[RMDB]
RNA sequence: GGGAACGACUCGAGUAGAGUCGAAAACCCCGCACCUUCGGGUGCGGGGAACUACCGAGAAUGCGACUCGGUAUAUACGCAAAACCCUUGGAAACAAGGGAUUUCACGAACAGUUCGCUGUUCGUAACUUAUAGAGGCUAUUCGUAGCCUCUAUAAGAAAAGAAACAACAACAACAAC
Reactivity to 2A3 in 0.01 (KOAc 150mM, MgCl2 10mM, bicine 150mM(pH8.5), 24C), signal-to-noise 3, nucleotides 027 to 126: c000c000c000c000g030c000a010c020c010u060u080c300g160g030g000u010g000c000g020g000g000g000a010a020c010u010a000c010c010g010a000g060a100a110u200g110c080g120a060c020u000c000g000g000u000a010u000a010u010a000c040g020c020a030a030a070a290c010c010c000u010u000g040g020a040a030a040c010a000a000g000g000g030a020u020u060u030c080a010c000g000a000a000c000a000g050u070u090c130g050c110u000g000u000u010c000g000u010a040a040
Reactivity to DMS in 0.01 (KOAc 150mM, MgCl2 10mM, bicine 150mM(pH8.5), 24C), signal-to-noise 4, nucleotides 027 to 126: c000c010c010c010g020c010a010c010c010u010u000c220g060g050g060u000g020c010g010g000g020g000a010a020c070u000a050c000c000g000a010g000a120a110u000g020c230g000a100c010u000c000g000g010u000a020u000a100u010a070c150g020c200a060a060a090a100c000c000c000u020u000g000g000a180a100a180c000a000a000g010g010g010a030u000u010u000c070a060c000g010a010a020c010a010g010u000u010c220g030c000u000g000u000u000c000g010u000a030a090